Chemical mapping of a 177-nucleotide RNA with DMS and 2A3. It was measured as part of the RMDB library OK2TST. The 2A3 profile rests on 909 reads. The DMS profile rests on 1,256 reads. Reactivities are given for positions 27 through 126. The reactions ran in a buffer of 150 mM KOAc, 10 mM MgCl2 and 150 mM bicine (pH 8.5), at 24 C.
RNA sequence: GGGAACGACUCGAGUAGAGUCGAAAAGCAUGAGAUAGAUAGAAGAAGUCAUGAAGUAGCGAUCUGGGCCAUGCGGUAUUAUUGGCCCACCGGCACAGCUCCAUGUAGAGAAGCUAAAUACCACGACCUCUUCGGUGUUAUUCGUAACACCGAAGAGAAAAGAAACAACAACAACAAC
Reactivity to DMS in 0.01 (KOAc 150mM, MgCl2 10mM, bicine 150mM(pH8.5), 24C), signal-to-noise 2, nucleotides 027 to 126: g020c030a040u010g010a050g000a080u000a050g020a220u000a080g000a120a060g000a100a080g010u000c010a020u000g000a050a040g030u020a100g050c020g000a080u000c080u000g000g000g030c000c010a010u010g010c140g020g010u010a030u030u000a120u000u040g000g010c000c000c000a010c080c100g030g000c020a050c060a130g020c050u000c050c030a080u000g050u000a080g030a090g010a070a110g000c030u000a040a010a110u000a040c060c010a100c180g000a090c150
Reactivity to 2A3 in 0.01 (KOAc 150mM, MgCl2 10mM, bicine 150mM(pH8.5), 24C), signal-to-noise 1, nucleotides 027 to 126: g060c050a030u080g010a040g010a140u080a120g090a010u050a040g040a060a000g040a010a000g050u050c010a060u080g010a060a000g070u070a000g020c010g060a060u070c040u140g000g010g000c040c000a010u020g030c110g030g020u100a140u160u050a040u010u050g050g000c000c000c000a000c000c000g050g000c000a030c000a080g010c000u000c050c000a050u080g040u130a060g020a030g070a070a000g030c000u070a030a120a000u080a050c000c020a040c020g030a050c000